This 207-nucleotide RNA was probed chemically with 2A3. Reactivities are given for positions 27 through 156. Values are in units of 0.01, from 0 to 300, in steps of 10. For 2A3 the reverse transcriptase was SuperScript II with manganese. The RNA was probed in 150 mM KOAc, 10 mM MgCl2 and 150 mM bicine (pH 8.5) at 24 C.

[RMDB]
RNA sequence: GGGAACGACUCGAGUAGAGUCGAAAAGAUUCGCCGUCGGCAUUUCCCCAGCAGCCAUGACCUACCAGGCUGCGGUGCGGCUCGCCGCACAGGACAUCCCUCAUCGGGCGCGUCCUGCGUCCUUCCAAAAACUGACUAACCUUCGGGUUAGUCAGAACGCUUCUGUUAUGUUCGCAUAACAGAAGCGAAAAGAAACAACAACAACAAC
Reactivity to 2A3 in 0.01 (KOAc 150mM, MgCl2 10mM, bicine 150mM(pH8.5), 24C), signal-to-noise 1, nucleotides 027 to 156: g030a140u060u050c040g010c090c040g020u070c020g040g000c070a080u050u060u080c000c050c000c000a030g030c000a000g010c050c000a130u170g050a240c030c010u110a120c070c090a050g000g000c020u000g000c010g010g110u060g000c080g020g060c090u080c150g030c030c020g000c010a030c000a040g000g040a010c010a070u080c020c030c010u100c050a140u110c050g010g030g000c010g010c050g050u090c010c060u070g020c000g020u050c000c010u130u090c020c010a040a020a060a120a120c000u000g000a000c000u000a000a000c000c000u040u040c080g040g000g000u000u000a000g000u000c000a000g000a000a000